This 177-nucleotide RNA was probed chemically with 2A3 and DMS. It was measured as part of the RMDB libraries RFM100 and RFMREP. Conditions: 150 mM KOAc, 10 mM MgCl2 and 150 mM bicine (pH 8.5), 24 C.
[RMDB]
RNA sequence: GGGAACGACUCGAGUAGAGUCGAAAAGCCGAUCCUAAGGUCACCCCUAACAGGAAGUGAUCGAAAGGGAAGCUGGUUAAUAUUCCAGCGCCUCAGGUGUUUUGCCAUAUAUAUACGCUUUGGGAUACACUCGGUAAUUCUUCGGAAUUACCGAGUGAAAAGAAACAACAACAACAAC
Reactivity to 2A3 in 0.01 (KOAc 150mM, MgCl2 10mM, bicine 150mM(pH8.5), 24C), signal-to-noise 4, nucleotides 027 to 126: g080c020c000g010a100u010c000c000u020a060a040g010g000u000c000a000c000c000c000c030u060a170a060c030a080g010g020a120a160g000u000g000a000u040c020g030a230a070a010g010g000g000a070a040g000c020u040g000g040u060u050a170a030u070a120u170u070c000c000a000g000c010g070c020c010u080c060a040g020g010u030g040u060u090u090u190g090c050c030a000u070a000u030a010u030a010u010a200c040g000c050u090u070u060g000g000g010a040u060a130
Reactivity to DMS in 0.01 (KOAc 150mM, MgCl2 10mM, bicine 150mM(pH8.5), 24C), signal-to-noise 2, nucleotides 027 to 126: g030c020c010g000a120u070c020c010u000a060a230g000g010u000c000a010c020c020c020c010u000a160a250c300a130g010g020a110a180g040u000g000a030u000c000g000a090a140a090g000g030g000a060a160g000c000u000g010g010u000u000a150a070u020a170u030u010c000c000a050g000c070g000c090c050u000c100a050g010g000u000g010u010u010u000u040g000c030c110a090u030a120u030a060u050a060u000a060c050g020c010u000u030u130g000g000g000a030u010a080